[RMDB]
RNA sequence: GGGAACGACUCGAGUAGAGUCGAAAAGAGAGCGCGGCAGUGAGACUGCGGGGGAUAAGCUUCGUAGUCGAGAGGGAAACAGCCCAGAUCGCCGGCUAAGGCCCCUAAGCGUGUACUAAGUGGAAAAAGUUGCAUAGUUAUUCGUAACUAUGCAACUAAAAGAAACAACAACAACAAC
Reactivity to 2A3 in 0.01 (KOAc 150mM, MgCl2 10mM, bicine 150mM(pH8.5), 24C), signal-to-noise 3, nucleotides 027 to 126: g100a000g000a000g000c120g000c010g100g010c030a050g020u040g080a090g010a040c010u000g000c010g000g000g010g000g020a150u110a200a070g110c000u060u040c040g010u020a020g000u040c030g010a010g010a010g010g020g010a040a180a080c050a070g090c000c010c000a050g020a110u090c040g000c020c000g020g000c010u010a050a040g070g010c000c010c000c000u040a110a040g030c030g050u050g010u030a030c030u040a050a120g040u100g060g000a080a040a010a040
Reactivity to DMS in 0.01 (KOAc 150mM, MgCl2 10mM, bicine 150mM(pH8.5), 24C), signal-to-noise 7, nucleotides 027 to 126: g000a120g010a050g000c010g020c020g000g020c030a090g010u000g000a190g010a140c000u000g010c010g000g000g010g010g020a120u050a120a160g010c000u000u010c010g010u000a030g000u000c000g000a120g000a180g010g000g000a130a090a130c250a120g000c000c000c040a100g000a160u020c090g020c050c040g000g010c030u010a060a110g000g000c060c020c010c050u020a070a090g010c070g030u010g010u010a050c090u010a090a110g010u010g000g000a090a070a080a120